Overview
Structure probing data (2A3 and DMS) for a 207-nucleotide construct. The RNA was probed in 150 mM KOAc, 10 mM MgCl2 and 150 mM bicine (pH 8.5) at 24 C. 2A3 is a SHAPE reagent: it acylates the 2'-hydroxyl of flexible nucleotides of all four kinds.
[RMDB]
RNA sequence: GGGAACGACUCGAGUAGAGUCGAAAACAGCUCAGAUUGCUCUGGAGCGGAAAGGAUUCGAAGUGGUGUGAAACAGAAAUGGACCCAAAUACAACUGGAAAUCUAGUGUAUGAGAAGGGUGUCCCUGCACGACAGUGGAGGACAGAUGGCUCUCUCACUAUUUAAUCGUAUUCGUACGAUUAAAUAGAAAAGAAACAACAACAACAAC
Reactivity to 2A3 in 0.01 (KOAc 150mM, MgCl2 10mM, bicine 150mM(pH8.5), 24C), signal-to-noise 9, nucleotides 027 to 156: c030a010g010c010u020c010a050g020a160u100u170g030c030u020c030u100g030g030a030g030c040g010g020a070a040a010g060g010a070u110u110c080g040a080a030g020u030g040g040u050g010u030g060a080a080a040c050a050g080a030a110a020u080g020g010a030c000c020c010a030a030a010u110a040c090a150a060c050u040g030g050a110a120a080u120c020u040a060g020u020g020u050a040u070g030a030g030a120a080g020g000g010u020g010u010c030c010c000u040g020c040a020c060g150a070c070a060g020u030g030g070a020g020g010a010c020a050g040a030u070g060g000c000u000c000u000c000u000c020a020
Reactivity to DMS in 0.01 (KOAc 150mM, MgCl2 10mM, bicine 150mM(pH8.5), 24C), signal-to-noise 7, nucleotides 027 to 156: c050a120g020c030u000c020a120g010a120u010u000g020c080u000c040u010g010g020a090g010c050g020g020a090a080a100g020g010a110u000u000c050g010a110a100g040u000g010g040u000g030u000g010a110a080a130c050a110g010a060a090a100u000g010g000a110c020c010c030a060a090a080u000a040c050a060a100c030u010g020g000a080a080a110u000c040u010a060g030u000g010u000a040u000g010a080g000a080a110g000g020g030u000g010u000c010c010c010u000g010c000a100c050g010a100c130a120g020u010g010g010a080g000g010a060c020a080g000a080u000g010g010c050u000c030u000c000u000c020a260
For 2A3, 11,180 sequencing reads were counted. Reactivities are rounded to 0.1 and cut off at 0 and 3. It was measured as part of the RMDB library OK3TST.